Structure probing data (DMS) for a 177-nucleotide construct.
The RNA was probed in 150 mM KOAc, 10 mM MgCl2 and 150 mM bicine (pH 8.5) at 24 C.
For DMS the reverse transcriptase was MarathonRT.
RNA sequence: GGGAACGACUCGAGUAGAGUCGAAAAGAUAUGGAGACGUAGGAGCCAUGCCACUUCGGAAACGAAUGCAUGGAACUACUCCGAGGUCUCCUAAGUCAAAAGGCCUUAGAGUUCGCUCUAAGGCCAACUCCCAAGGAUAGUUCGCUAUCCUUGGGAGAAAAGAAACAACAACAACAAC
Reactivity to DMS in 0.01 (KOAc 150mM, MgCl2 10mM, bicine 150mM(pH8.5), 24C), signal-to-noise 3, nucleotides 027 to 126: g010a040u000a300u000g010g000a000g000a000c000g010u010a300g010g030a010g000c000c000a000u000g000c020c090a080c110u000u000c000g000g000a130a120a250c010g010a070a020u000g000c000a000u000g000g000a020a010c050u010a250c010u000c020c010g010a190g010g000u000c000u000c000c000u000a020a050g000u000c020a080a120a080a100g000g000c010c000u000u000a000g000a010g020u000u010c300g000c000u010c010u000a010a000g010g010c010c000a000a020